[RMDB]
RNA sequence: GGGAACGACUCGAGUAGAGUCGAAAAAGGUACGAUGCUUUUGUGUCGUGCUUCUUGUUUCUGGCACGUUGUGUCUUCACGCAGACAGAAGCUACCCAGGUAAUUCUGUUCCCGUAACGCUCAACGUCUGUACCGAGAGUUUCGACUCUCGGUACAGAAAAGAAACAACAACAACAAC
Reactivity to 2A3 in 0.01 (KOAc 150mM, MgCl2 10mM, bicine 150mM(pH8.5), 24C), signal-to-noise 2, nucleotides 027 to 126: a000g000g030u020a000c000g010a030u030g000c000u100u280u300u300g010u010g000u000c000g000u000g000c010u070u000c010u000u000g030u000u000u000c000u010g040g000c070a000c030g030u000u000g000u000g060u000c000u070u060c170a040c030g000c030a040g000a030c000a000g000a020a000g060c030u030a040c020c000c030a010g020g080u000a070a070u000u020c010u090g000u060u010c000c040c000g000u020a010a080c020g000c030u020c020a000a000c040g020u020
Source: RMDB library RFM100, as collected in RNAgym. An RNA of 177 nucleotides, treated with 2A3 and read out base by base. The 2A3 profile rests on 1,243 reads.